[RMDB]
RNA sequence: GGGAACGACUCGAGUAGAGUCGAAAAAGGGCAGGGUGAAAUUCCCGAUCGGCGGUAAAGUCCGCGAGCCGAACGAAAAAGGUUUGGCAGGAACCGGUGAGAUUCCGGUACCGACAUUAUAGUCUGGAUGACCACUUCAGCUUCGGCUGAAGUGGAACGAUAAGGUAUUCUUCGGAAUACCUUAUCGAAAAGAAACAACAACAACAAC
Reactivity to DMS in 0.01 (KOAc 150mM, MgCl2 10mM, bicine 150mM(pH8.5), 24C), signal-to-noise 3, nucleotides 027 to 156: a090g030g020g020c060a070g020g000g020u010g000a060a150a290u000u000c020c010c010g000a140u000c030g000g000c010g010g010u000a110a170a030g000u000c010c000g010c010g020a280g010c020c000g000a010a110c010g010a050a140a130a180a120g010g010u000u000u000g010g000c010a090g020g000a020a030c000c010g000g030u020g000a290g000a300u000u010c010c010g000g000u010a010c000c010g000a040c050a110u010u000a090u000a140g010u000c030u000g000g010a140u000g000a200c000c000a030c020u000u000c000a000g000c010u000u000c270g080g030c000u010g000a010a010g010u000g000g000a000a030
Reactivity to 2A3 in 0.01 (KOAc 150mM, MgCl2 10mM, bicine 150mM(pH8.5), 24C), signal-to-noise 2, nucleotides 027 to 156: a000g080g020g020c060a040g000g000g000u020g020a030a040a050u070u020c010c010c010g010a090u060c010g000g000c000g000g000u000a000a010a000g000u000c000c000g010c010g010a000g000c000c000g010a000a000c010g100a080a080a070a020a100g120g000u000u000u000g010g010c000a000g020g000a000a010c010c000g000g010u010g000a010g000a000u000u000c000c000g000g010u000a000c000c000g000a000c000a000u100u230a080u100a090g050u010c060u060g060g080a110u060g090a040c010c000a000c000u000u010c000a000g010c020u040u080c200g100g000c000u000g000a000a000g000u000g000g000a010a000